[RMDB]
RNA sequence: GGGAACGACUCGAGUAGAGUCGAAAACGCAACGAGUCCCGCAAGAUCCUCGGCCUGCCAGACCUGAAGGUUGCCGGUACUUGUGUUCGCGUGCCAGUCUUUACCGGCCACACCAUGGUGGUGCACGUAGCCGUUUAUGUUUCGACAUAAACGGCUAAAAAGAAACAACAACAACAAC
Reactivity to 2A3 in 0.01 (KOAc 150mM, MgCl2 10mM, bicine 150mM(pH8.5), 24C), signal-to-noise 2, nucleotides 027 to 126: c040g000c040a030a020c060g020a020g060u050c010c030c000g000c020a030a040g030a180u090c000c010u030c030g010g020c000c030u120g070c050c010a060g020a180c000c000u110g120a110a060g090g000u030u040g020c040c020g000g010u030a030c030u030u050g040u010g030u160u090c080g000c020g030u000g070c030c010a030g000u000c030u000u060u020a020c000c020g040g060c030c000a040c000a000c050c020a050u090g090g000u050g000g030u070g050c030a000c110g030
Reactivity to DMS in 0.01 (KOAc 150mM, MgCl2 10mM, bicine 150mM(pH8.5), 24C), signal-to-noise 3, nucleotides 027 to 126: c090g000c090a100a060c030g000a060g000u000c040c010c020g020c080a110a120g000a100u000c030c000u000c040g010g000c020c010u000g000c120c150a090g000a030c060c030u010g010a080a090g000g000u000u000g010c100c020g010g000u000a020c080u000u010g010u000g010u000u000c150g000c020g000u000g000c020c040a100g010u000c060u000u000u000a040c070c020g010g000c000c060a070c070a090c070c060a130u010g010g010u000g010g000u010g020c060a040c140g000
The data come from the RNA Mapping Database (RMDB), library OK2TST. The record gives the reactivity of an RNA of 177 nucleotides to 2A3 and DMS. The RNA was probed in 150 mM KOAc, 10 mM MgCl2 and 150 mM bicine (pH 8.5) at 24 C. For 2A3 the reverse transcriptase was SuperScript II with manganese. DMS adducts were read by reverse transcription with MarathonRT. Reactivities are given for positions 27 through 126.